[RMDB]
RNA sequence: GGGAACGACUCGAGUAGAGUCGAAAACCAGAAGGGCGGGGGUGGCCUGGAGCGUCGGGCCCCAGCAGUCCGUGGAAUUCACCCUCUUACCGCUUCUCCACACUCCUUCCCCCCUGCGGGCUCCCCCAUCGAGCGUUGUUCGCAACGCUCAAAAGAAACAACAACAACAAC
Reactivity to 2A3 in 0.01 (KOAc 150mM, MgCl2 10mM, bicine 150mM(pH8.5), 24C), signal-to-noise 5, nucleotides 027 to 129: c020c000a030g110a050a060g070g040g020c100g000g010g000g000g020u060g010g000c020c030u050g010g000a040g010c050g080u130c050g020g040g000c000c000c020c000a010g020c010a010g020u000c030c000g020u030g020g060a030a110u140u070c020a060c000c000c000u040c050u030u130a110c030c040g030c020u020u010c010u000c030c000a030c010a040c050u040c000c000u010u060c000c000c000c000c000c000u020g000c010g020g010g000c020u000c000c000c000c000c000a080u140c060
Reactivity to DMS in 0.01 (KOAc 150mM, MgCl2 10mM, bicine 150mM(pH8.5), 24C), signal-to-noise 4, nucleotides 027 to 129: c020c000a130g020a110a120g020g000g040c190g000g000g000g000g000u010g000g010c100c070u010g050g010a050g010c150g040u000c070g010g020g010c070c040c020c090a090g020c130a090g040u020c040c020g030u010g010g040a180a150u050u020c060a000c090c020c030u020c050u030u030a130c070c040g030c060u040u010c050u040c060c010a100c040a100c080u020c020c040u080u000c020c000c000c010c040c020u000g010c050g030g000g000c050u000c060c000c040c000c020a120u080c130